Structure probing data (DMS) for a 177-nucleotide construct.

[RMDB]
RNA sequence: GGGAACGACUCGAGUAGAGUCGAAAAGGUAUUGAAACGUGAAUUAUUUAAUAUACCAUUACUUGGUUGGGGACUCCGUAUGGUUAAACCGAUUGCAGUUGAUCGCGGUACUAAUAGUUCAGUUGCAAGUGCACUACGGAUUCGUCCGUAGUGCACUAAAAGAAACAACAACAACAAC
Reactivity to DMS in 0.01 (KOAc 150mM, MgCl2 10mM, bicine 150mM(pH8.5), 24C), signal-to-noise 1, nucleotides 027 to 126: g010g000u030a050u010u000g040a090a080a020c050g030u020g010a140a120u000u030a040u000u000u000a070a100u000a160u000a020c000c000a100u010u020a090c120u000u000g000g010u010u030g020g010g000g000a250c090u000c030c020g040u000a030u010g000g000u030u000a030a100a190c050c030g000a060u000u000g000c100a060g000u000u000g030a050u020c100g010c160g030g030u000a020c230u000a030a090u000a030g010u000u000c030a070g010u000u010g030c050a010
Reactivities are given for positions 27 through 126.
Conditions: 150 mM KOAc, 10 mM MgCl2 and 150 mM bicine (pH 8.5), 24 C.